[RMDB]
RNA sequence: GGGAACGACUCGAGUAGAGUCGAAAACGCAGAGGGUUCUGAUAACAAAGAACCUAGAUAGCCGCAUCGGUAUUAUAGGAUGUAGUCGGUGAGCCGGAAUGCCUGCAUCGUAAGCCUAUAAGUAAAUCCCACAGAAACUGAGCCUUCGGGCUCAGAAACAGAUACAGUGAUUCGUCACUGUAUCUGUAAAAGAAACAACAACAACAAC
Reactivity to DMS in 0.01 (KOAc 150mM, MgCl2 10mM, bicine 150mM(pH8.5), 24C), signal-to-noise 3, nucleotides 027 to 156: c110g010c030a120g020a300g050g000g000u010u000c010u000g020a240u010a150a150c300a120a290a070g010a010a020c000c010u010a090g040a180u000a220g000c040c070g010c080a110u000c060g040g000u010a100u000u000a030u000a020g020g020a060u010g000u000a090g010u000c020g020g010u000g000a110g020c000c030g000g050a110a190u010g010c080c010u000g000c010a020u010c020g010u000a080a130g030c000c010u000a040u000a030a090g030u000a050a060a100u010c000c000c020a100c100a210g000a140a160a180c010u000g000a040g010c000c000u000u000c300g060g030g030c000u000c010a000g010a020a080
Reactivity to 2A3 in 0.01 (KOAc 150mM, MgCl2 10mM, bicine 150mM(pH8.5), 24C), signal-to-noise 4, nucleotides 027 to 156: c080g020c040a040g030a070g100g020g000u000u010c030u020g070a100u100a180a040c040a030a100a010g000a010a010c000c000u010a020g030a050u080a010g010c020c020g040c090a060u090c110g040g030u050a040u140u040a040u070a040g010g030a020u060g060u110a040g080u070c030g000g030u020g020a010g020c030c030g070g070a080a010u090g040c000c000u030g060c010a010u000c030g040u050a020a030g000c010c010u030a020u010a070a000g030u030a000a080a070u030c020c010c000a030c010a020g120a010a080a020c000u000g000a000g000c010c010u050u090c220g090g000g000c000u000c000a010g000a000a010